This 177-nucleotide RNA was probed chemically with 2A3 and DMS. For 2A3, 7,112 sequencing reads were counted.
[RMDB]
RNA sequence: GGGAACGACUCGAGUAGAGUCGAAAAUAUCCAAGGGUUUGCCUGUGGAUGUGGGGCAUCAUAUACAGCUAAUGAUGUCGAAGUCCAAUCAUCUGGCAUGAUUAAGCCAAAUGCUCUUCUUUGUGCUGUACUACUUCUAGUUCGCUAGAAGUAGUACAAAAGAAACAACAACAACAAC
Reactivity to 2A3 in 0.01 (KOAc 150mM, MgCl2 10mM, bicine 150mM(pH8.5), 24C), signal-to-noise 5, nucleotides 027 to 126: u080a030u020c010c000a010a030g070g010g020u050u160u250g150c010c000u120g050u060g110g000a020u020g050u070g060g070g000g010c000a000u000c010a000u040a010u030a100c040a020g040c040u070a110a000u020g000a000u010g010u000c010g020a070a020g060u000c020c000a020a050u050c030a020u020c040u050g010g000c020a020u070g040a130u220u110a060a030g000c010c000a020a060a010u060g000c030u020c030u140u020c030u050u090u070g070u050g050c030u020
Reactivity to DMS in 0.01 (KOAc 150mM, MgCl2 10mM, bicine 150mM(pH8.5), 24C), signal-to-noise 4, nucleotides 027 to 126: u000a050u010c010c010a120a070g010g000g020u020u020u010g010c010c000u000g030u000g020g010a010u010g030u010g030g020g010g000c000a010u000c010a000u010a240u010a110c100a040g000c060u010a110a060u000g000a020u000g020u000c020g020a100a130g020u000c030c030a100a140u000c040a020u010c060u000g020g020c000a080u000g010a130u010u010a090a130g010c040c020a030a030a030u010g010c270u010c090u000u000c040u000u000u000g020u000g030c090u000
Conditions: 150 mM KOAc, 10 mM MgCl2 and 150 mM bicine (pH 8.5), 24 C.